The record gives the reactivity of an RNA of 177 nucleotides to DMS. For DMS the reverse transcriptase was MarathonRT. Conditions: 150 mM KOAc, 10 mM MgCl2 and 150 mM bicine (pH 8.5), 24 C.

[RMDB]
RNA sequence: GGGAACGACUCGAGUAGAGUCGAAAAAUCCAUGAAGGAUACACUCCGUUAAGGGAUGGCAUGAAGAAGUUUGCUGAGCCAAUGUAUCUGCUAGAGGAAAAACUACUCGAUGAAGUUGCAGGUGACACGUUUUCCAACCGUUCGCGGUUGGAAAACGAAAAGAAACAACAACAACAAC
Reactivity to DMS in 0.01 (KOAc 150mM, MgCl2 10mM, bicine 150mM(pH8.5), 24C), signal-to-noise 1, nucleotides 027 to 126: a100u000c000c000a040u070g090a290a230g000g000a040u050a030c120a090c260u000c020c000g000u000u010a040a160g000g000g000a090u000g010g010c000a090u000g060a150a100g000a070a120g060u020u020u000g030c150u000g000a050g000c050c010a130a060u000g020u000a020u000c000u000g020c040u010a140g000a060g020g000a000a040a090a130a000c020u000a010c020u000c000g000a110u000g000a110a260g000u000u000g050c020a140g020g040u000g000a040c200a080